Record summary: Structure probing data (DMS and 2A3) for a 177-nucleotide construct. Conditions: 150 mM KOAc, 10 mM MgCl2 and 150 mM bicine (pH 8.5), 24 C.
RNA sequence: GGGAACGACUCGAGUAGAGUCGAAAAUUGAACGGAUUCGUCCGUUCAACGCCUGCGAUCCAAACGUAGUACAAAAGUACAGACGAAAGCACAAGGAUCAAAUGAUACAGCCGUUCGCGGCUGUAAAAUAUUGGGCAAUAUUCGUAUUGCCCAAUAUAAAAGAAACAACAACAACAAC
Reactivity to DMS in 0.01 (KOAc 150mM, MgCl2 10mM, bicine 150mM(pH8.5), 24C), signal-to-noise 4, nucleotides 027 to 126: u000u010g020a010a000c000g020g000a020u000u010c200g040u000c010c000g000u000u000c010a010a010c120g000c010c010u000g030c100g000a010u010c020c010a100a110a210c010g010u000a060g010u000a000c010a100a100a090a160g010u000a020c010a080g010a070c010g010a140a060a070g000c150a090c190a080a110g000g000a000u000c010a070a110a100u000g010a190u000a000c000a010g000c020c000g010u000u010c210g010c000g010g010c000u000g000u000a000a020a090
Reactivity to 2A3 in 0.01 (KOAc 150mM, MgCl2 10mM, bicine 150mM(pH8.5), 24C), signal-to-noise 3, nucleotides 027 to 126: u020u000g000a000a000c000g010g030a010u010u070c180g050u000c050c000g000u010u000c010a000a000c000g020c000c000u050g050c060g000a010u000c000c000a030a060a080c030g000u010a000g020u010a030c040a010a300a040a040g010u010a010c010a050g110a050c030g090a180a090a060g070c050a050c060a170a090g000g000a000u010c010a020a050a050u110g030a020u010a040c020a010g010c000c000g000u090u140c280g020c040g110g020c020u000g000u000a000a000a000
DMS (dimethyl sulfate) methylates the pairing face of unpaired adenines and cytosines.
DMS adducts were read by reverse transcription with MarathonRT.
High 2A3 reactivity points to a flexible backbone, as in loops and unpaired stretches.